[RMDB]
Conditions: 150 mM KOAc, 10 mM MgCl2 and 150 mM bicine (pH 8.5), 24 C. An RNA of 177 nucleotides, treated with 2A3 and DMS and read out base by base. The 2A3 profile rests on 6,681 reads. Values are in units of 0.01, from 0 to 300, in steps of 10. It was measured as part of the RMDB library M2PK50.
RNA sequence: GGGAACGACUCGAGUAGAGUCGAAAAUAGCUGACGUUCGCGUCAGCUAAAAGCACCAAAACCUCCUGGCGGUGCGGCGCCGGCCCCGCCGCGAAGGCCGCCAACUCGAUGGGUUCGCCCAUCGAAAAGUUCCAAUAAAGUUCGCUUUAUUGGAACUAAAAGAAACAACAACAACAAC
Reactivity to 2A3 in 0.01 (KOAc 150mM, MgCl2 10mM, bicine 150mM(pH8.5), 24C), signal-to-noise 2, nucleotides 027 to 126: u050a000g000c000u000g010a010c000g020u040u020c250g030c000g130u010c000a000g000c000u000a000a000a010a000g000c030a050c060c040a040a070a060a120c020c040u080c020c030u030g010g000c010g010g000u090g010c000g000g010c010g000c030c040g070g030c030c000c000c020g000c020c000g000c000g030a080a030g250g000c010c000g000c000c000a000a020c030u010c000g000a000u000g000g000g000u010u010c100g060c010c000c000a000u000c000g000a000a000a000
Reactivity to DMS in 0.01 (KOAc 150mM, MgCl2 10mM, bicine 150mM(pH8.5), 24C), signal-to-noise 4, nucleotides 027 to 126: u000a020g010c000u000g020a000c000g020u000u010c220g020c000g000u000c000a020g010c000u000a000a020a090a100g010c160a180c040c040a100a030a080a270c050c030u010c040c060u000g000g000c000g010g020u000g010c030g010g010c000g020c070c020g000g000c050c030c300c010g000c010c010g030c020g000a070a080g020g000c000c000g010c000c020a060a050c190u000c010g000a010u000g000g000g010u000u010c160g010c000c000c000a010u000c010g000a000a040a070